[RMDB]
RNA sequence: GGGAACGACUCGAGUAGAGUCGAAAAGAUAUGGAAUGGGCUCCAACAGCCGUCAGAUCGGAAACGAUCUAACGGACAUGGAGCCAUUCCUAAGUCAAAUCAGUUGGGUGUUCGCACCCAACUGAAACACAAUGGAAGAGUUCGCUCUUCCAUUGUGAAAAGAAACAACAACAACAAC
Reactivity to 2A3 in 0.01 (KOAc 150mM, MgCl2 10mM, bicine 150mM(pH8.5), 24C), signal-to-noise 4, nucleotides 027 to 126: g000a010u040a020u050g000g040a010a000u050g150g300g170c010u000c020c030a240a270c180a300g130c000c000g000u000c010a000g000a010u000c010g010g000a070a000a010c000g000a000u000c000u020a000a000c020g020g030a070c130a220u070g010g000a000g000c000c000a000u000u020c000c000u000a000a010g000u000c020a000a010a290u040c000a010g000u010u000g030g010g010u050g040u090u140c300g070c110a000c000c020c010a000a000c000u000g000a000a000a000
Reactivity to DMS in 0.01 (KOAc 150mM, MgCl2 10mM, bicine 150mM(pH8.5), 24C), signal-to-noise 5, nucleotides 027 to 126: g020a030u000a240u000g000g000a010a000u000g010g030g020c010u010c000c000a060a140c300a240g010c010c000g010u000c030a010g010a020u000c000g020g000a080a050a130c010g000a010u000c000u000a020a000c000g010g010a130c170a190u000g000g000a010g020c000c000a000u000u000c000c000u000a010a100g010u010c010a120a170a180u000c000a010g000u000u000g000g010g030u000g010u000u010c300g020c010a010c010c000c000a010a000c000u000g000a010a080a230